[RMDB]
RNA sequence: GGGAACGACUCGAGUAGAGUCGAAAAACGUCGUACGCCUGGGCGGCGUACACCGACGGAUAGCGGCCGUUGUAUUCCUUGCGGAAGGCCUCGACGAACUUCUUGUUCUGCGGCACGUCCAGGUCAAAUAGUGCCCCAUAUUCGUAUGGGGCACUAUAAAAGAAACAACAACAACAAC
Reactivity to DMS in 0.01 (KOAc 150mM, MgCl2 10mM, bicine 150mM(pH8.5), 24C), signal-to-noise 2, nucleotides 027 to 126: a040c070g020u020c050g070u000a050c090g030c000c030u010g030g020g040c080g000g010c020g000u000a020c040a100c120c020g010a010c040g030g000a090u000a130g010c160g010g020c000c020g000u010u010g000u020a160u000u000c020c010u000u010g020c140g020g010a100a100g020g000c000c000u040c130g010a100c080g030a040a020c070u010u000c180u010u010g010u010u000c020u000g000c110g020g040c020a090c100g010u000c020c030a050g010g010u000c150a100a090